[RMDB]
RNA sequence: GGGAACGACUCGAGUAGAGUCGAAAACAUGCUGGUCUCAAAUUCCUAAACUCCUGGGAUGGAGCAGUCCUCCUACCUCAGCCUCCCAAAGUGUUGAGAUUACAGGUAUGAGGUAUGAGCCACUGAGUCUUACUGGGUGGUUCGCCACCCAGUAAGAAAAAGAAACAACAACAACAAC
Reactivity to 2A3 in 0.01 (KOAc 150mM, MgCl2 10mM, bicine 150mM(pH8.5), 24C), signal-to-noise 1, nucleotides 027 to 126: c030a000u080g060c030u020g070g070u110c050u030c050a100a140a080u070u030c010c010u070a140a090a120c030u090c000c020u090g100g000g020a140u050g050g040a020g000c020a010g090u070c030c000u010c000c000u010a060c000c010u020c010a020g010c010c000u050c010c000c020a100a120a000g170u180g010u070u080g080a050g030a070u000u200a040c040a060g000g040u120a230u150g030a000g000g000u000a010u090g010a000g000c010c040a020c010u030g010a010g090
Reactivity to DMS in 0.01 (KOAc 150mM, MgCl2 10mM, bicine 150mM(pH8.5), 24C), signal-to-noise 2, nucleotides 027 to 126: c100a080u000g020c090u010g010g020u010c000u010c050a050a040a260u000u010c010c000u000a080a100a130c080u010c070c010u000g010g000g000a060u010g000g000a060g030c120a080g010u000c230c000u000c020c050u000a040c020c000u010c010a050g000c020c030u000c010c050c030a040a050a090g020u020g030u000u000g000a040g020a120u000u010a080c190a050g010g020u000a040u000g000a010g030g020u000a090u010g010a040g010c060c030a050c030u000g000a060g000